Chemical mapping of a 177-nucleotide RNA with 2A3 and DMS.
Reactivities are rounded to 0.1 and cut off at 0 and 3.
Reactivities are given for positions 27 through 126.

[RMDB]
RNA sequence: GGGAACGACUCGAGUAGAGUCGAAAACAGACUGGUGGGCAAACCAAAUAAGCAACACUAAUGUACUCACACAUUACAGGACAGAAGGGAAAUUUUACGAGUUCACCAGACAGAACGCAGCGGACACCUAUCUCCAAAAGUUCGCUUUUGGAGAUAGAAAAGAAACAACAACAACAAC
Reactivity to 2A3 in 0.01 (KOAc 150mM, MgCl2 10mM, bicine 150mM(pH8.5), 24C), signal-to-noise 9, nucleotides 027 to 126: c010a010g150a070c020u020g000g010u020g010g030g020c040a070a070a070c030c050a050a090a070u270a070a020g090c080a040a080c030a020c090u060a030a050u040g020u070a080c050u080c100a020c010a000c000a110u020u130a060c050a070g050g080a030c020a060g120a090a110g050g020g050a030a120a090u130u140u060u070a100c070g010a020g030u020u020c000a010c000c000a000g030a010c010a010g080a040a010c050g000c060a030g030c040g040g010a010c000a030c010
Reactivity to DMS in 0.01 (KOAc 150mM, MgCl2 10mM, bicine 150mM(pH8.5), 24C), signal-to-noise 6, nucleotides 027 to 126: c070a090g010a130c040u010g000g020u000g000g000g020c010a090a100a160c170c080a040a080a070u020a110a140g020c040a110a080c110a080c100u000a040a060u000g010u010a070c080u020c210a090c180a060c080a010u010u000a090c130a040g000g000a050c090a030g000a120a080g010g000g000a030a080a060u010u040u020u020a080c140g010a170g010u010u000c020a040c010c000a040g000a090c070a090g000a100a090c070g010c040a030g000c030g000g000a050c090a060c170